Source information:
Source: RMDB library OK1LIB, as collected in RNAgym. An RNA of 177 nucleotides, treated with 2A3 and DMS and read out base by base. For 2A3, 1,397 sequencing reads were counted. Values cover nucleotides 27 to 126. For 2A3 the reverse transcriptase was SuperScript II with manganese. For DMS, 3,699 sequencing reads were counted. The reactions ran in a buffer of 150 mM KOAc, 10 mM MgCl2 and 150 mM bicine (pH 8.5), at 24 C.

[RMDB]
RNA sequence: GGGAACGACUCGAGUAGAGUCGAAAAGAAGGUAUGAACGUUGGAAGGCGCUUCCGUGUGAGCGGAAUUCUUUCAUACCAGGAGUUGGCGGACGGAUGUGGCCGAAGAACGGGAUAACCGGAAGAAAGGGUAAAAGAUACUUCGGUAUCUUUUACCCAAAAGAAACAACAACAACAAC
Reactivity to 2A3 in 0.01 (KOAc 150mM, MgCl2 10mM, bicine 150mM(pH8.5), 24C), signal-to-noise 2, nucleotides 027 to 126: g100a050a030g010g000u000a000u070g010a070a030c050g020u070u070g060g120a040a030g010g000c030g030c030u020u010c000c000g010u140g030u140g070a050g040c040g000g080a020a060u020u040c060u000u110u070c030a040u150a100c040c030a000g040g000a010g000u050u050g050g050c040g060g020a000c040g000g000a020u020g010u100g160g000c000c030g000a030a000g040a000a000c000g000g010g020a040u050a120a130c030c040g060g020a030a020g030a060a060a030
Reactivity to DMS in 0.01 (KOAc 150mM, MgCl2 10mM, bicine 150mM(pH8.5), 24C), signal-to-noise 3, nucleotides 027 to 126: g000a300a160g000g000u000a050u010g000a230a060c120g000u000u000g010g020a240a190g000g030c010g000c030u000u010c000c000g000u010g010u040g000a190g030c020g020g030a020a020u020u010c010u020u010u020c110a080u000a100c250c130a100g000g000a040g000u020u000g010g000c020g010g000a080c040g000g000a010u000g000u010g010g060c030c010g000a080a240g020a030a010c020g000g020g000a140u010a050a030c000c000g000g000a180a140g010a070a050a100